RNA sequence: GGGAACGACUCGAGUAGAGUCGAAAAGAAGAUGUGCUCUUUUGAGCAGUCUCAACUUUGCUCGUUCCCGUUAUGGGAAAAAUUUUGGAAGGUCUUGGUAGGAACGGGUGGAUCUUAUAAUUUUUGAGCGGUAGAUAAUUUUCGAAUUAUCUACCGCAAAAGAAACAACAACAACAAC
Reactivity to 2A3 in 0.01 (KOAc 150mM, MgCl2 10mM, bicine 150mM(pH8.5), 24C), signal-to-noise 9, nucleotides 027 to 126: g090a020a000g030a030u150g070u070g300c010u060c020u080u270u260u300g020a010g000c020a000g010u000c010u000c000a040a080c020u030u030u050g020c020u030c050g020u010u000c000c000c020g000u120u150a160u160g020g010g000a030a030a040a070a100u140u190u100u110g100g030a090a050g050g010u020c030u120u080g060g000u090a040g010g030a070a020c020g010g000g030u030g020g010a000u000c010u020u110a120u060a190a230u070u080u030u030u050g050a030
Reactivity to DMS in 0.01 (KOAc 150mM, MgCl2 10mM, bicine 150mM(pH8.5), 24C), signal-to-noise 3, nucleotides 027 to 126: g000a120a050g010a020u000g020u000g000c010u000c010u010u050u030u040g000a020g000c000a170g000u000c000u010c110a090a080c030u000u000u010g000c100u010c030g000u000u000c000c000c020g020u020u050a050u040g000g000g000a010a020a050a070a110u000u000u010u020g000g010a120a080g020g000u000c040u000u010g020g010u010a070g000g020a080a060c110g000g000g010u000g010g000a080u010c050u000u010a100u020a060a050u020u000u010u000u010g000a300